The record gives the reactivity of an RNA of 177 nucleotides to DMS and 2A3.
The data come from the RNA Mapping Database (RMDB), library TTRDEL.
The DMS profile rests on 16,365 reads.
The reactions ran in a buffer of 150 mM KOAc, 10 mM MgCl2 and 150 mM bicine (pH 8.5), at 24 C.
RNA sequence: GGGAACGACUCGAGUAGAGUCGAAAAGAUAUGGAAUGUGGUUGAAGUGGAGAAGGGCCGUCGGAAACGACGGGCCUUCGAUGAAAUGGACACAUUCCUAAGUCAAACUCGUGGUUCGCCACGAGAACAAGAAAACAUAGUUCGCUAUGUUUUCUUGAAAAGAAACAACAACAACAAC
Reactivity to DMS in 0.01 (KOAc 150mM, MgCl2 10mM, bicine 150mM(pH8.5), 24C), signal-to-noise 8, nucleotides 027 to 126: g000a020u010a300u010g000g010a010a000u000g020u000g010g010u010u010g000a220a200g010u000g010g010a050g010a020a010g020g010g000c000c000g010u000c010g010g000a090a050a150c010g010a010c000g000g010g000c000c000u000u000c000g000a050u010g000a090a100a030u000g000g010a060c010a010c000a010u000u000c000c000u000a030a080g000u000c020a120a100a190c010u000c000g030u000g000g000u010u010c280g010c000c000a010c000g000a000g000a080a160
Reactivity to 2A3 in 0.01 (KOAc 150mM, MgCl2 10mM, bicine 150mM(pH8.5), 24C), signal-to-noise 6, nucleotides 027 to 126: g010a020u050a030u100g000g010a010a000u000g020u020g040g200u300u130g080a130a060g080u090g090g070a060g010a030a010g020g020g050c010c000g010u000c000g000g020a040a040a040c010g000a000c000g020g000g000c010c000u000u000c000g000a030u010g010a000a010a020u060g030g020a010c000a000c000a000u010u010c000c000u000a080a010g030u000c040a050a040a120c010u000c010g000u000g000g060u070u090c300g010c100c000a000c000g000a000g010a000a020